RNA sequence: GGGAACGACUCGAGUAGAGUCGAAAAUGUCAAUAAGAAUUCCGGUCUUUUCCGGAGCCACCAAGUGGAAUGCUACGUGCAUAAAUGCACGUAGCUAAAGACCCGAAGGCUAGCAAUAGCUAGCCGACCCAGUCCGACCAUUCGUGGUCGGACUGGGAAAAGAAACAACAACAACAAC
Reactivity to 2A3 in 0.01 (KOAc 150mM, MgCl2 10mM, bicine 150mM(pH8.5), 24C), signal-to-noise 1, nucleotides 027 to 126: u120g010u000c040a000a060u180a240a270g080a100a000u140u110c000c070g000g050u070c050u000u100u050u020c000c000g000g000a000g080c000c000a070c000c080a140a000g000u030g150g180a010a180u220g000c000u000a000c000g000u000g000c030a030u140a270a300a000u030g000c000a000c000g000u000a000g030c000u000a000a000a000g000a000c000c000c000g150a100a010g000g000c000u000a000g000c000a000a300u010a050g000c000u000a000g000c000c000g070a000
The data come from the RNA Mapping Database (RMDB), library OK1LIB. This 177-nucleotide RNA was probed chemically with 2A3. 2A3 adducts were read by reverse transcription with SuperScript II with manganese. Reactivities are given for positions 27 through 126.